[RMDB]
RNA sequence: GGGAACGACUCGAGUAGAGUCGAAAAUAGCCUUGACGCAGCGGCAGCCCCGUGUCUACCGCGCGACUCGCAGAACCUCGCGUGGCCUUAUGCCAUAUUACCGCCUUCAUCCCAGCAUCACCCCGACACCGGGCUAUCGCGGUUCGGUAUAUGUGGGGCUUACUCAGGUUUUCGAACCUGAGUAAGCAAAAGAAACAACAACAACAAC
Reactivity to 2A3 in 0.01 (KOAc 150mM, MgCl2 10mM, bicine 150mM(pH8.5), 24C), signal-to-noise 1, nucleotides 027 to 156: u210a020g080c000c000u020u050g120a070c040g010c090a050g000c030g010g000c020a020g000c050c000c030c040g020u040g030u010c090u070a060c000c030g000c000g000c000g050a020c030u050c140g050c010a070g010a110a090c010c010u000c020g000c000g040u010g000g040c010c010u230u090a130u170g040c020c010a040u070a090u220u080a060c020c010g050c000c020u000u070c040a110u040c040c010c000a000g030c000a050u030c020a040c000c010c000c000g030a010c000a010c080c020g010g050g000c030u040a050u100c070g060c010g040g000u030u020c050g000g020u040a070u020a030u130g090u180g000g030g010